[RMDB]
RNA sequence: GGGAACGACUCGAGUAGAGUCGAAAAUCGAGCCGGGUCUUGCAUCGGGUUGGCUCAUCCUGAGACCGGGGAGCUUCGACGAUCUCUUGUCUCUCCUGAAGGAGGAAGGAGCUCUCGAACGCUCUCCCUCAAGUAAUGAGUUCGCUCAUUACUUGAGAAAAGAAACAACAACAACAAC
Reactivity to 2A3 in 0.01 (KOAc 150mM, MgCl2 10mM, bicine 150mM(pH8.5), 24C), signal-to-noise 3, nucleotides 027 to 126: u120c020g000a020g000c010c010g030g060g180u020c050u090u210g100c030a090u090c060g210g060g050u040u020g020g000c000u010c020a020u030c000c000u040g060a050g050a070c020c080g000g000g000g000a000g000c000u000u010c010g020a030c100g010a020u000c010u020c000u050u060g250u040c050u040c000u030c130c010u140g200a300a140g020g000a000g000g010a000a000g020g000a010g000c000u000c000u000c000g000a010a010c060g000c000u000c000u000c000c000
Reactivity to DMS in 0.01 (KOAc 150mM, MgCl2 10mM, bicine 150mM(pH8.5), 24C), signal-to-noise 3, nucleotides 027 to 126: u000c140g000a040g030c010c010g020g010g000u010c030u000u020g020c190a100u010c130g000g000g010u000u000g010g010c010u000c020a090u000c010c010u000g000a110g010a110c210c120g000g000g010g000a010g010c020u000u000c010g000a020c190g000a020u000c000u010c000u000u000g000u010c030u010c000u000c000c010u000g040a130a210g020g010a010g010g020a130a040g000g000a010g000c130u000c010u000c000g010a000a020c190g020c000u000c000u000c010c020